[RMDB]
RNA sequence: GGGAACGACUCGAGUAGAGUCGAAAAGGUACACGUGAGUGUACCAAGGAGGUCUACGGACCUCCAAGCGCUCACGUGAGUGAGCGCACCGAAGCUACGGCUUCGGAAGUAUUCUCGUACGCGAGAAUACACUUAUUCGUUCGCGAAUAAGAAGCUACUGCUACGGCAGUAGCAAGAACGAUCUUCGGAUCGUUCAAGCACACAUCUACGGAUGUGUGCACACGCACGGUGACGUGCGUGAAAGUUGGACGAACAUUAAACGUCCUACAGAUAGAUUCGUCUAUCUGAAAAGAAACAACAACAACAAC
Reactivity to DMS in 0.01 (KOAc 150mM, MgCl2 10mM, bicine 150mM(pH8.5), 24C), signal-to-noise 3, nucleotides 027 to 266: g010g020u010a000c000a000c010g000u030g010a230g010u000g010u000a000c010c000a090a050g000g000a010g010g010u000c000u000a130c140g010g000a020c000c000u000c000c010a030a050g010c010g020c040u010c040a020c010g010u020g010a230g030u000g010a000g020c010g080c030a030c010c010g010a010a010g000c000u000a070c270g030g010c010u000u000c000g000g000a100a140g010u000a000u000u000c010u000c000g030u000a080c220g040c020g000a010g000a030a000u000a010c010a240c020u000u000a000u000u000c000g020u010u000c200g010c020g020a010a010u020a020a010g010a270a130g000c000u000a010c000u000g010c000u010a110c210g010g000c010a000g010u000a000g000c000a080a040g000a010a000c000g000a000u000c000u000u020c200g010g010a000u000c000g010u000u000c000a120a150g000c000a000c000a010c010a000u010c010u010a120c170g010g010a010u000g000u010g020u000g010c040a030c010a000c000g010c000a000c000g000g000u010g000a070c010g070u000g000c000g010u000g010a060a090a100g010u000u010g000g010a010c000g000a110a080c100a170u000u010a040a150a130c010g000u000c020c030u000a140
Reactivity to 2A3 in 0.01 (KOAc 150mM, MgCl2 10mM, bicine 150mM(pH8.5), 24C), signal-to-noise 9, nucleotides 027 to 266: g000g000u010a000c000a000c000g110u130g120a130g030u000g010u000a000c000c000a000a000g000g000a000g000g000u000c010u040a050c300g070g000a000c000c000u000c000c000a000a020g000c010g000c000u010c010a010c040g110u140g080a060g010u000g000a000g010c010g010c000a000c000c000g000a000a000g000c010u020a030c300g140g000c000u000u000c000g000g000a020a020g000u000a000u000u000c010u000c000g010u040a030c280g020c010g140a000g000a000a000u000a000c030a010c010u010u000a000u000u000c010g040u030u080c270g030c010g140a000a000u010a000a000g080a080a010g000c000u000a000c000u000g000c000u010a030c250g130g000c010a010g000u000a000g000c000a000a030g000a000a000c000g000a000u010c000u040u100c220g130g000a000u000c000g000u000u000c000a000a010g000c000a000c000a000c000a000u000c010u040a030c300g120g000a000u000g000u000g000u000g000c000a010c000a000c000g010c000a000c000g000g020u060g040a020c000g000u000g000c000g000u000g010a020a010a000g100u110u080g010g000a010c010g030a300a130c070a170u240u300a130a100a020c010g000u000c000c000u010a020

Source information:
An RNA of 307 nucleotides, treated with DMS and 2A3 and read out base by base. Reactivities are given for positions 27 through 266. The data come from the RNA Mapping Database (RMDB), library POS240. For DMS, 8,577 sequencing reads were counted. The RNA was probed in 150 mM KOAc, 10 mM MgCl2 and 150 mM bicine (pH 8.5) at 24 C.